[RMDB]
RNA sequence: GGGAACGACUCGAGUAGAGUCGAAAAGAUAUGGAAACGUGAGCUCGAAGAACUUACGUAACAUCUAUCGGAAACGAUAGUGGUAAGGGAGAGCUCUUCCUAAGUCAAAGCCGGGUUCGCCCGGCAACGAAUCACACAAGUUCGCUUGUGUGAUUCGAAAAGAAACAACAACAACAAC
Reactivity to 2A3 in 0.01 (KOAc 150mM, MgCl2 10mM, bicine 150mM(pH8.5), 24C), signal-to-noise 2, nucleotides 027 to 126: g020a000u100a030u190g040g000a050a150a060c270g130u140g030a020g020c000u030c020g180a270a070g050a040a000c000u000u010a000c010g060u050a040a010c020a170u130c000u010a010u020c000g020g010a070a030a040c020g000a000u010a000g010u010g040g000u010a040a020g060g040g000a070g000a000g020c000u000c000u000u000c000c000u040a060a010g040u030c050a110a060a070g000c000c010g020g000g000u030u100c200g080c040c030c000g000g030c000a000a000
Reactivity to DMS in 0.01 (KOAc 150mM, MgCl2 10mM, bicine 150mM(pH8.5), 24C), signal-to-noise 2, nucleotides 027 to 126: g010a030u010a300u010g020g010a040a090a150c200g020u010g000a000g000c000u000c000g010a170a170g000a090a160c010u000u000a000c000g000u000a030a060c160a040u000c000u010a010u010c010g000g010a160a090a170c010g000a010u000a000g010u000g010g020u000a000a030g000g010g010a070g000a020g030c000u000c000u010u000c000c000u000a020a130g000u000c050a090a050a150g000c000c010g000g010g000u000u010c220g000c000c000c010g030g010c000a000a000